[RMDB]
RNA sequence: GGGAACGACUCGAGUAGAGUCGAAAAUGUGUGCUUAGUGGCGAAAGUUGAUGCGAUGUAAGUUGGGUGAUAUUGUUGGCAUCCAUUUCGCCCGAUAUUAAUUGGCGGGCUAAAUAACUGCUACCUACGGUGCUAUCAGGCGCCAAAUUUGAUGUUAGUUAGAUGGGUUGUUCGCAACCCAUCUAACAAAAGAAACAACAACAACAAC
Reactivity to 2A3 in 0.01 (KOAc 150mM, MgCl2 10mM, bicine 150mM(pH8.5), 24C), signal-to-noise 2, nucleotides 027 to 156: u100g060u000g010u030g040c000u060u040a020g020u050g120g010c010g020a090a040a080g020u020u050g010a010u010g020c020g030a040u130g100u220a030a010g070u080u090g030g000g020u100g030a070u010a020u080u130g040u010u020g020g000c000a030u000c030c010a040u000u010u040c040g000c000c030c000g000a010u060a040u140u220a190a180u070u120g060g000c000g000g000g070c000u000a030a000a090u100a080a050c070u070g010c010u000a010c000c060u100a030c060g000g000u040g170c000u200a050u300c080a040g040g010c020g000c000c000a020a070a070u040u030u060g060a050u040g000u050u120a050
An RNA of 207 nucleotides, treated with 2A3 and read out base by base. The data come from the RNA Mapping Database (RMDB), library OK3TST. The reactions ran in a buffer of 150 mM KOAc, 10 mM MgCl2 and 150 mM bicine (pH 8.5), at 24 C. 2A3 adducts were read by reverse transcription with SuperScript II with manganese.